[RMDB]
RNA sequence: GGGAACGACUCGAGUAGAGUCGAAAAGUGUCCGAUACAUAUAGACACAACGGACACGGUAGGCUUGUGUCUAUAUGUAUGCCUACCACCGUACGGUGGACAUGCGAAAGCAUGUCCAUCGUACGGAGCUCCAACUAGCGUUCGCGCUAGUUGGAGCAAAAGAAACAACAACAACAAC
Reactivity to 2A3 in 0.01 (KOAc 150mM, MgCl2 10mM, bicine 150mM(pH8.5), 24C), signal-to-noise 2, nucleotides 027 to 126: g090u060g100u070c020c040g030a000u020a070c010a010u010a000u020a000g010a000c000a000c000a050a010c090g120g060a050c070a070c250g100g070u110a080g110g090c080u020u020g000u020g000u040c010u010a010u010a000u030g030u020a020u040g000c000c010u100a120c010c010a070c030c000g000u000a000c010g000g040u020g000g000a000c020a000u000g010c000g010a120a000a000g000c000a000u000g010u000c010c010a000u000c010g000u000a000c000g000g000a000